The record gives the reactivity of an RNA of 177 nucleotides to 2A3 and DMS.
It was measured as part of the RMDB library TTRDEL.

[RMDB]
RNA sequence: GGGAACGACUCGAGUAGAGUCGAAAAGAUAUGGAUUAUCUGACCCUCCUAUGAAGUCGGAAACGAUGGAGGAGAGGUCAGAGUAAUCCUAAGUCAAAAGUUCGGUCCCGUUCGCGGGACCGAACAACAAACAAGAUCACUUCGGUGAUCUUGUUUGAAAAGAAACAACAACAACAAC
Reactivity to 2A3 in 0.01 (KOAc 150mM, MgCl2 10mM, bicine 150mM(pH8.5), 24C), signal-to-noise 2, nucleotides 027 to 126: g030a010u040a020u190g000g000a000u000u000a000u000c000u000g010a020c020c010c000u000c090c000u300a300u300g010a020a010g040u010c010g020g050a100a060a030c010g010a000u010g020g010a000g030g050a000g060a100g000g020u000c000a000g000a000g000u000a010a000u000c010c010u010a160a040g070u040c040a220a000a000a000g010u020u000c010g050g000u000c040c040c070g000u070u080c300g010c000g070g030g000a010c000c000g000a000a010c020a000a000
Reactivity to DMS in 0.01 (KOAc 150mM, MgCl2 10mM, bicine 150mM(pH8.5), 24C), signal-to-noise 2, nucleotides 027 to 126: g000a040u000a300u010g010g010a020u000u000a020u000c000u000g010a010c010c000c000u000c000c000u000a300u030g010a040a170g000u000c010g000g000a180a090a250c020g010a030u000g000g000a010g030g000a000g000a080g040g000u000c010a000g000a020g010u000a010a000u000c010c000u010a050a110g000u000c030a070a090a180a120g020u000u000c000g020g020u000c010c000c000g030u000u000c210g010c030g020g000g000a010c000c000g010a000a000c020a030a100